[RMDB]
Structure probing data (2A3 and DMS) for a 170-nucleotide construct. The RNA was probed in 150 mM KOAc, 10 mM MgCl2 and 150 mM bicine (pH 8.5) at 24 C. For 2A3, 87,069 sequencing reads were counted. For DMS, 71,297 sequencing reads were counted. 2A3 adducts were read by reverse transcription with SuperScript II with manganese.
RNA sequence: GGGAACGACUCGAGUAGAGUCGAAAAUUCGUCUCGGACCGGCUCAUCUUCGGCAAAGGGCGGCGGUCCUCAGUGCUCUUACUCUUUUCUGUAAAGAGGAGACUGCUGGACUCUCCGCCCAAGCCGACCAUCAGUAACUUCGGUUACUGAAAAAGAAACAACAACAACAAC
Reactivity to 2A3 in 0.01 (KOAc 150mM, MgCl2 10mM, bicine 150mM(pH8.5), 24C), signal-to-noise 9, nucleotides 027 to 129: u040u020c020g050u020c010u010c020g020g040a030c010c000g010g000c010u010c020a090u020c050u100u030c010g000g000c010a080a100a220g000g000g000c000g000g000c020g000g000u000c010c000u000c000a050g000u130g200c010u010c010u070u210a280c010u030c000u040u060u110u070c150u230g300u300a010a010a000g000a000g010g000a000g010a000c000u020g060c040u020g020g000a010c020u020c020u000c170c000g000c000c000c000a000a010g000c000c000g010a010c010c010a080
Reactivity to DMS in 0.01 (KOAc 150mM, MgCl2 10mM, bicine 150mM(pH8.5), 24C), signal-to-noise 9, nucleotides 027 to 129: u050u020c040g020u050c030u000c020g050g000a060c050c030g020g000c020u010c020a030u000c030u030u020c030g000g000c030a030a190a200g040g020g030c030g000g000c300g000g020u010c010c010u000c020a030g010u020g050c030u020c000u030u060a300c050u020c000u010u010u010u020c210u060g090u110a010a010a010g000a030g030g000a040g010a010c020u030g030c100u000g000g010a010c030u010c030u010c040c000g010c050c000c010a030a050g030c010c000g020a060c190c070a070